[RMDB]
RNA sequence: GGGAACGACUCGAGUAGAGUCGAAAACGAGGAAGAGACGUUCGCGUCAGAGACUGCCCUCAUACCUGAUGAGAUCUGUACCGACUCCUCAGAAACUGGCAUGCCAAAUCAAAAUGGGUCUGGUUCACUAGAUAGUAAGUUUCGACUUACUAUCUAGAAAAGAAACAACAACAACAAC
Reactivity to DMS in 0.01 (KOAc 150mM, MgCl2 10mM, bicine 150mM(pH8.5), 24C), signal-to-noise 9, nucleotides 027 to 126: c130g010a060g000g010a120a060g000a170g010a060c040g010u000u000c090g020c030g010u000c020a060g000a100g000a150c170u000g010c070c020c020u000c060a080u000a160c110c010u000g000a040u010g010a070g000a060u000c020u010g010u000a080c100c050g000a150c070u000c010c020u000c020a110g000a060a070a090c090u000g010g010c090a060u000g010c020c030a030a060a090u010c120a030a050a090a090u000g000g010g010u000c020u010g010g010u000u000c090a200
Reactivity to 2A3 in 0.01 (KOAc 150mM, MgCl2 10mM, bicine 150mM(pH8.5), 24C), signal-to-noise 9, nucleotides 027 to 126: c050g010a020g030g020a050a070g030a030g010a060c020g020u040u030c100g030c010g070u020c020a010g020a010g030a140c060u110g020c020c020c000u030c020a050u090a100c010c030u040g040a050u040g020a030g010a090u030c050u140g060u070a110c020c010g030a030c020u000c010c000u010c010a010g070a030a090a020c050u030g020g000c030a030u100g090c010c020a050a080a070u120c050a030a050a060a160u100g030g010g010u010c020u040g060g000u060u060c040a040